An RNA of 207 nucleotides, treated with 2A3 and DMS and read out base by base. The DMS profile rests on 6,868 reads. The 2A3 profile rests on 4,379 reads. Reactivities are rounded to 0.1 and cut off at 0 and 3. The data come from the RNA Mapping Database (RMDB), library M2RFPK.

RNA sequence: GGGAACGACUCGAGUAGAGUCGAAAAGGAGCGACAAGUAUUUAGCCUGAGAUAGCUAAAUCACCUCGGUAUGAUUAGGGUGAGACCUAGGAACCGUAGGGGUAUUCUCAAAGGAAGCUUUUGCAGUGAAGGAAGAUACGAUUCGUCGUAUCUUCAAGAAUUGUGAAAACUUCGGUUUUCACAAUUCAAAAGAAACAACAACAACAAC
Reactivity to 2A3 in 0.01 (KOAc 150mM, MgCl2 10mM, bicine 150mM(pH8.5), 24C), signal-to-noise 3, nucleotides 027 to 156: g070g010a040g040c030g090a060c040a060a020g050u080a100u020u050u020a010g010c020c020u100g040a080g020a140u180a030g010c010u010a010a020a020u050c020a030c000c010u030c020g000g010u280a180u160g040a060u030u050a010g000g010g020u050g090a070g050a050c000c010u000a010g000g040a030a030c020c010g030u060a030g000g020g000g010u030a070u130u080c060u010c000a050a060a010g080g010a030a030g020c020u060u060u140u180g020c070a030g030u040g140a110a020g090g010a010a000g010a000u000a000c000g000a000u010u060c110g020u000c000g000u070a000u000c000u000u000c000a010a000
Reactivity to DMS in 0.01 (KOAc 150mM, MgCl2 10mM, bicine 150mM(pH8.5), 24C), signal-to-noise 3, nucleotides 027 to 156: g000g000a080g020c030g010a070c050a040a080g010u010a040u000u000u000a010g030c010c020u010g010a260g020a130u000a070g020c000u010a010a010a020u000c030a040c010c010u020c010g010g030u000a080u010g010a210u010u000a010g020g010g020u000g020a250g010a130c010c010u000a080g000g010a120a070c010c020g000u010a040g020g010g000g020u000a050u000u000c030u000c060a090a130a120g000g010a070a150g010c020u000u010u020u000g020c020a110g000u000g010a160a160g020g000a010a000g000a010u000a010c000g010a090u010u000c300g020u010c010g000u000a010u000c000u000u000c000a040a140